[RMDB]
RNA sequence: GGGAACGACUCGAGUAGAGUCGAAAAGACGUGUCCCCGACGUGGAGCCAAGAGGAAUGAGCCUCGCCAACAGCAGCCGUUUACGGCUGGAAAGGGGAAAAACAAAGCGCAGGGCAAUGGGGUUUGGUUUGGAAUUUGUAUUCGUACAAAUUCCAAAAAAAGAAACAACAACAACAAC
Reactivity to DMS in 0.01 (KOAc 150mM, MgCl2 10mM, bicine 150mM(pH8.5), 24C), signal-to-noise 7, nucleotides 027 to 126: g000a080c050g000u010g020u010c020c000c000c030g000a100c060g010u010g010g000a140g010c050c050a090a100g010a050g000g010a200a120u010g010a160g010c020c010u000c020g000c060c040a050a110c170a090g000c020a020g000c010c000g020u010u020u010a080c030g030g000c000u000g000g000a020a050a100g000g000g010g010a030a050a060a080a080c130a060a090a100g010c050g010c070a050g010g000g010c050a100a070u010g010g000g010g000u000u020u000g010g010
Reactivity to 2A3 in 0.01 (KOAc 150mM, MgCl2 10mM, bicine 150mM(pH8.5), 24C), signal-to-noise 3, nucleotides 027 to 126: g040a010c060g020u020g070u060c000c000c000c000g030a050c030g080u060g040g030a050g020c020c020a070a040g020a030g090g030a100a180u190g040a040g060c000c010u010c010g020c000c010a070a080c020a010g110c000a010g000c000c010g020u090u160u240a170c030g030g000c010u010g010g030a060a070a070g030g000g000g050a050a060a000a000a000c070a010a020a000g050c030g030c030a030g000g000g030c010a020a040u060g000g000g000g000u020u010u070g050g000